[RMDB]
This 177-nucleotide RNA was probed chemically with DMS.

RNA sequence: GGGAACGACUCGAGUAGAGUCGAAAAUUCCUUCCAUGCCUACGGUUAGAUGCUUGAAUUUCUUUGGUGGCAUUCUGUCGACACAUGGAAGAUUGAUUUUAGGUAAGAUGUAUCUCCAGCUAUUGAAUUGCGCAAGAUUGUUCGCAAUCUUGCGCAAAAAAGAAACAACAACAACAAC
Reactivity to DMS in 0.01 (KOAc 150mM, MgCl2 10mM, bicine 150mM(pH8.5), 24C), signal-to-noise 1, nucleotides 027 to 126: u000u030c170c000u000u000c000c010a000u000g020c220c030u000a170c020g020g000u000u000a040g030a020u000g000c000u000u020g020a020a180u000u030u030c080u000u000u050g040g120u000g000g000c000a050u050u010c020u020g000u000c000g060a290c300a050c010a010u000g010g020a000a020g000a130u010u000g000a030u000u000u000u000a060g010g000u000a020a110g040a120u000g010u000a060u000c010u000c040c090a160g030c050u030a070u020u000g030a130a190